RNA sequence: GGGAACGACUCGAGUAGAGUCGAAAACUAGGGGGACCACAGUGGGGCAGGCUGCAUGGAAAAUAUCCGCAGGGUCCCCCAGGCAGAACAGCCACGCUCCAGGCCAGGCUGUCCCUACUGCCUGGUGCAAAGCGCUAGCUUUCGAGCUAGCGCUUUGAAAAGAAACAACAACAACAAC
Reactivity to DMS in 0.01 (KOAc 150mM, MgCl2 10mM, bicine 150mM(pH8.5), 24C), signal-to-noise 1, nucleotides 027 to 126: c030u000a170g040g000g010g000g000a020c020c010a110c240a180g070u000g000g030g000g010c050a050g010g020c000u000g000c060a080u010g000g020a060a090a130a070u020a020u000c030c020g030c030a110g020g000g000u000c000c010c010c000c010a010g000g000c050a030g010a080a090c210a060g000c000c020a070c170g000c030u010c000c050a010g010g010c020c060a080g000g010c000u000g000u000c030c010c040u020a190c070u000g000c020c000u000g000g000u000g000